[RMDB]
RNA sequence: GGGAACGACUCGAGUAGAGUCGAAAACAGGGGUAUGUUAGUCUGUUUUCAUGCUGCUGAUAAAGACAUACCCGAGACUGGGCAAUUUACAAAAGAAAGAGGUUUAUUGGACUUAUAGUUCCACAUGUCUGGGGAGGCCUCAUAAUCAUGGCGGAAGUAGUCGAUAUCGAUUCGUCGAUAUCGACUAAAAAGAAACAACAACAACAAC
Reactivity to 2A3 in 0.01 (KOAc 150mM, MgCl2 10mM, bicine 150mM(pH8.5), 24C), signal-to-noise 1, nucleotides 027 to 156: c030a000g000g000g000g000u040a010u010g040u010u130a070g010u050c060u030g000u060u030u050u180c070a090u190g050c010u050g060c030u010g000a010u060a160a130a000g000a000c010a030u060a010c000c000c010g000a000g000a040c040u020g000g060g000c000a020a040u070u160u160a060c060a010a150a040a010g140a010a060a000g040a050g060g060u070u060u020a050u060u150g030g030a010c000u080u110a080u090a300g040u100u040c000c000a000c000a060u120g010u000c040u030g010g000g000g040a010g000g050c000c020u050c060a010u090a050a010u100c060a000u080g090g000c010g000g000a050a000g120